[RMDB]
RNA sequence: GGGAACGACUCGAGUAGAGUCGAAAACGCUCGGGAUGGGCCUCAGUGCCGACGAGGAGUCCGCAGGUGGGAGGAUCAGCCACCGGAGAGGGACGCGAUGGUAAGAGUGGAGGAAAGUUCGGAGGGAAAAUCAUGGUGUUCGCACCAUGAAAAAGAAACAACAACAACAAC
Reactivity to DMS in 0.01 (KOAc 150mM, MgCl2 10mM, bicine 150mM(pH8.5), 24C), signal-to-noise 8, nucleotides 027 to 129: c110g030c010u000c040g000g000g040a040u030g030g010g040c000c040u030c080a110g000u050g020c030c010g000a070c040g020a060g040g000a090g000u000c040c080g040c070a080g000g000u000g020g020g000a070g010g000a030u000c110a050g040c080c050a070c050c040g000g000a060g030a040g030g000g040a040c160g000c070g030a070u000g000g000u030a070a060g020a020g030u050g000g000a060g010g000a050a040a060g010u000u040c050g000g030a080g000g020g000a050a040a070a100
Reactivity to 2A3 in 0.01 (KOAc 150mM, MgCl2 10mM, bicine 150mM(pH8.5), 24C), signal-to-noise 9, nucleotides 027 to 129: c050g020c010u030c020g030g000g030a040u090g030g040g010c000c020u060c020a040g030u070g160c020c020g030a050c020g010a030g020g000a000g020u030c020c030g040c040a010g010g040u070g040g020g010a030g020g010a030u050c030a020g040c010c010a030c020c010g000g000a050g010a020g020g010g000a020c020g010c040g070a050u100g020g020u020a040a020g040a040g050u100g020g000a000g020g000a060a020a000g040u070u040c020g010g010a030g020g000g010a020a040a010a060